[RMDB]
RNA sequence: GGGAACGACUCGAGUAGAGUCGAAAACGCCAAGCACGAGUCGCAGACGCUAAAGUUUACGCUACGUCAAGACGGAUGUGACAGGGCAAAAGCUAGCCAAAGCUUUAGGCGAACGUACGAGAAGCGAUAUUAUUUAUAUAUUCGUAUAUAAAUAAUAAAAAGAAACAACAACAACAAC
Reactivity to 2A3 in 0.01 (KOAc 150mM, MgCl2 10mM, bicine 150mM(pH8.5), 24C), signal-to-noise 3, nucleotides 027 to 126: c050g010c010c000a040a010g030c020a010c070g070a070g020u020c020g000c090a030g010a090c020g010c060u150a220a090a020g010u040u090u110a050c050g000c040u090a050c050g040u040c030a020a000g050a050c050g030g000a040u060g020u030g030a030c050a100g060g040g010c010a000a030a030a030g030c010u010a020g010c020c020a080a070a000g000c000u030u050u130a100g010g000c000g010a060a030c030g050u130a030c030g040a020g030a200a000g050c030g030a030
Reactivity to DMS in 0.01 (KOAc 150mM, MgCl2 10mM, bicine 150mM(pH8.5), 24C), signal-to-noise 3, nucleotides 027 to 126: c090g000c000c000a160a170g010c030a080c030g000a200g000u000c010g000c080a100g000a110c130g020c100u010a040a060a120g000u000u000u010a090c210g010c050u000a060c120g000u020c070a070a090g010a060c080g000g020a110u020g000u000g010a050c080a200g000g000g000c040a120a070a080a040g000c020u000a050g010c090c120a100a170a050g010c000u000u000u000a070g000g000c010g010a080a040c050g030u000a050c050g000a050g000a090a090g010c040g000a220